[RMDB]
The data come from the RNA Mapping Database (RMDB), library OK3TST. Structure probing data (2A3 and DMS) for a 207-nucleotide construct.
RNA sequence: GGGAACGACUCGAGUAGAGUCGAAAAGUGGCAUUGGUACAAUCCACAGACCUUAUUCAGAUUUCCAGUUUUAUUUGUACGUGUGUGUGUGUGUGUGUGUGUGUGUGUAUGUUUUAUGCAGUUUUAUCACAUGUAGGUCUGGGUACUCACUAACACAGUAAAUAGGGUGAUUCGUCACCCUAUUUACAAAAGAAACAACAACAACAAC
Reactivity to 2A3 in 0.01 (KOAc 150mM, MgCl2 10mM, bicine 150mM(pH8.5), 24C), signal-to-noise 3, nucleotides 027 to 156: g030u020g020g000c080a040u040u090g070g020u170a040c040a020a040u010c030c000a050c020a050g050a080c020c010u040u160a120u100u160c140a060g060a140u080u070u000c060c040a060g050u070u040u110u100a120u100u160u100g080u050a050c050g040u040g010u010g010u000g000u000g010u000g010u000g020u000g000u010g010u000g000u000g010u010g020u000g020u000g000u000a020u020g110u050u080u040u020a050u050g020c020a000g000u000u030u090u090a080u050c030a030c020a050u080g050u090a010g000g040u020c020u030g000g010g020u020a030c020u030c050a050c010u020a070a000c070a010c020a080
Reactivity to DMS in 0.01 (KOAc 150mM, MgCl2 10mM, bicine 150mM(pH8.5), 24C), signal-to-noise 3, nucleotides 027 to 156: g020u000g010g010c100a230u000u000g020g020u000a080c060a080a150u010c020c060a080c030a120g020a090c020c010u000u010a070u000u010c060a090g010a140u000u000u000c020c020a160g020u000u000u000u000a080u000u030u000g020u000a060c050g050u030g010u020g030u010g030u020g020u000g000u000g020u000g000u000g030u000g030u000g020u020g020u010g020u000g020u010a030u000g010u010u000u000u010a060u010g010c040a080g010u000u000u000u000a070u010c030a040c050a050u010g010u000a070g020g000u000c020u010g000g010g010u000a060c050u020c060a070c070u000a070a080c060a080c050a170

DMS adducts were read by reverse transcription with MarathonRT.